The record gives the reactivity of an RNA of 177 nucleotides to 2A3 and DMS. Conditions: 150 mM KOAc, 10 mM MgCl2 and 150 mM bicine (pH 8.5), 24 C. Source: RMDB library OK1LIB, as collected in RNAgym. For DMS, 9,720 sequencing reads were counted. For 2A3, 2,828 sequencing reads were counted.

RNA sequence: GGGAACGACUCGAGUAGAGUCGAAAAGAUGAUGGAUACUGCGGAAACUGUGAUUGUGGCCCAGGUGGAAAGUACAUAGGCGACAUUUGAUAAGGUGUAUACGGAAUCAUAGAUGGGUGUCCGUAAAAUCCUGCAUGGUAUUCGUACCAUGCAGGAUAAAAGAAACAACAACAACAAC
Reactivity to 2A3 in 0.01 (KOAc 150mM, MgCl2 10mM, bicine 150mM(pH8.5), 24C), signal-to-noise 4, nucleotides 027 to 126: g100a070u200g010a050u100g030g000a020u040a070c040u050g090c000g040g050a030a100a000c030u040g010u100g050a080u010u080g060u120g060g000c000c000c000a010g000g000u020g020g030a100a120a020g040u040a020c060a090u100a040g000g080c040g040a040c030a080u030u070u070g200a160u130a150a140g100g000u000g020u050a050u060a020c030g000g050a010a010u110c020a050u050a090g070a110u170g070g000g010u040g040u040c000c000g010u030a000a000a000
Reactivity to DMS in 0.01 (KOAc 150mM, MgCl2 10mM, bicine 150mM(pH8.5), 24C), signal-to-noise 4, nucleotides 027 to 126: g010a100u020g010a050u020g000g010a070u010a030c050u010g010c080g010g020a080a090a050c050u010g000u000g010a100u010u010g030u010g010g010c010c020c040a060g020g030u000g000g030a030a040a090g030u020a020c060a070u020a120g020g010c030g020a050c060a070u020u000u000g000a090u020a080a100g030g000u000g010u010a090u010a040c000g000g000a160a010u010c030a030u020a080g010a070u040g000g010g010u010g000u000c010c000g000u020a020a050a070